[RMDB]
Structure probing data (DMS and 2A3) for a 207-nucleotide construct. The DMS profile rests on 2,487 reads. For 2A3 the reverse transcriptase was SuperScript II with manganese. The reactions ran in a buffer of 150 mM KOAc, 10 mM MgCl2 and 150 mM bicine (pH 8.5), at 24 C. Source: RMDB library OK3TST, as collected in RNAgym.

RNA sequence: GGGAACGACUCGAGUAGAGUCGAAAAUUCAAGCCAGAGCUAUGCAUAUGUUAGGUGAUGGGUAGUAUCCCUUUAAGGUCUCAAACAUUACAACAUCAAUUAUGAAAUACUGAUAACGAAAGGUAGUAAUGAAAUAUAUAUGAUGAAAAGAAUUGAGAAACUCCUUUUGUUUCGACAAAAGGAGUUUAAAAGAAACAACAACAACAAC
Reactivity to DMS in 0.01 (KOAc 150mM, MgCl2 10mM, bicine 150mM(pH8.5), 24C), signal-to-noise 2, nucleotides 027 to 156: u000u010c040a070a140g000c020c000a100g010a180g050c000u000a030u010g020c050a100u000a040u000g030u010u010a090g020g010u000g000a100u000g000g000g050u000a140g040u000a150u000c000c040c000u000u000u000a070a040g040g030u010c040u030c010a050a100a150c060a080u010u000a070c050a070a150c040a050u000c010a040a090u030u000a110u010g010a100a110a050u000a140c050u010g010a130u000a080a070c090g000a100a050a120g030g010u000a040g000u010a040a030u010g000a080a050a090u000a050u000a090u000a080u000g010a090u000g000a080a080a060a230g000a160a130u010u010g010a210g000
Reactivity to 2A3 in 0.01 (KOAc 150mM, MgCl2 10mM, bicine 150mM(pH8.5), 24C), signal-to-noise 1, nucleotides 027 to 156: u000u000c020a010a030g010c000c000a000g030a000g000c010u080a020u100g040c050a130u070a070u300g060u060u120a130g000g060u030g030a050u060g000g080g000u120a130g000u050a200u120c060c010c030u000u070u050a090a090g000g010u000c000u020c060a080a120a040c000a020u020u150a020c000a000a060c010a010u050c020a060a090u040u000a010u130g020a090a050a000u080a080c020u050g120a090u090a300a180c030g050a040a000a050g000g000u030a030g000u000a020a230u060g030a050a040a000u080a000u000a000u030a120u150g010a000u020g020a000a170a000a110g040a000a000u110u160g120a080g000